[RMDB]
Source information
Chemical mapping of a 177-nucleotide RNA with DMS and 2A3.

RNA sequence: GGGAACGACUCGAGUAGAGUCGAAAAUGUUCACACAGCGACACCAAGAUCGCGUGGGGUAGCGCCAUCCGGGCAGCAUAGACGGCAAGCCGGAUUGCUAUGCAACUAGGUGCAUAUUGACCGUGUAGCAUGGUUCAAAAUUCGUUUUGAACCAUGCAAAAGAAACAACAACAACAAC
Reactivity to DMS in 0.01 (KOAc 150mM, MgCl2 10mM, bicine 150mM(pH8.5), 24C), signal-to-noise 4, nucleotides 027 to 126: u010g000u000u000c040a060c040a140c040a150g030c040g030a020c050a130c120c180a110a130g000a090u000c050g020c050g020u000g000g000g020g010u000a070g010c100g020c070c110a040u000c010c010g000g010g000c090a240g000c020a090u000a100g030a110c190g000g010c040a040a100g010c010c010g000g000a040u010u000g010c030u000a040u000g000c020a070a070c060u000a070g010g020u000g000c050a030u000a100u010u000g000a150c020c030g020u000g000u000a130
Reactivity to 2A3 in 0.01 (KOAc 150mM, MgCl2 10mM, bicine 150mM(pH8.5), 24C), signal-to-noise 1, nucleotides 027 to 126: u020g010u060u090c030a020c010a000c020a140g050c000g020a000c010a030c120c140a120a040g020a210u040c020g030c040g000u010g000g000g000g010u030a010g040c010g000c040c010a000u010c000c000g010g040g020c030a010g010c000a030u060a130g150a100c120g080g010c050a070a040g090c020c000g000g010a010u010u010g020c000u030a060u090g020c010a040a080c010u080a010g060g020u020g020c020a010u050a050u090u090g040a040c030c050g010u090g040u060a010

DMS (dimethyl sulfate) methylates the pairing face of unpaired adenines and cytosines. The RNA was probed in 150 mM KOAc, 10 mM MgCl2 and 150 mM bicine (pH 8.5) at 24 C.